[RMDB]
RNA sequence: GGGAACGACUCGAGUAGAGUCGAAAAUGUGUCUCCUUCGGGAGACACAAACGCUCGGAGCCCGAGGCCGCACGGGCAAGGCAGCGGCCAGCCAGCGAGCUAUGUGUUAUCAAUUCGUUGAUAACAAACUAUAGAACGAAUUCGUUCGUUCUAUAGUAAAAGAAACAACAACAACAAC
Reactivity to 2A3 in 0.01 (KOAc 150mM, MgCl2 10mM, bicine 150mM(pH8.5), 24C), signal-to-noise 7, nucleotides 027 to 126: u060g000u000g000u010c000u010c010c000u020u090c170g090g000g000a000g000a000c000a000c000a000a020a000c040g000c000u010c030g050g080a070g050c020c010c010g020a060g000g020c000c000g050c020a070c090g090g090g020c100a080a070g150g000c060a030g020c000g030g000c010c000a010g030c020c020a040g100c010g020a010g010c020u090a130u200g180u010g000u020u000a010u000c010a020a020u070u070c220g050u070u010g010a010u000a000a000c000a020a030
Reactivity to DMS in 0.01 (KOAc 150mM, MgCl2 10mM, bicine 150mM(pH8.5), 24C), signal-to-noise 9, nucleotides 027 to 126: u010g010u000g000u000c000u000c000c000u000u010c200g030g020g010a010g010a010c000a000c000a010a040a080c200g000c010u000c020g020g010a160g010c010c010c010g000a100g000g000c010c010g020c010a130c110g020g010g010c120a060a070g000g010c090a090g010c020g010g010c000c000a060g010c050c070a150g010c030g010a040g010c030u010a050u010g010u000g000u000u000a010u000c000a020a040u000u010c190g020u000u000g000a010u000a000a000c000a040a090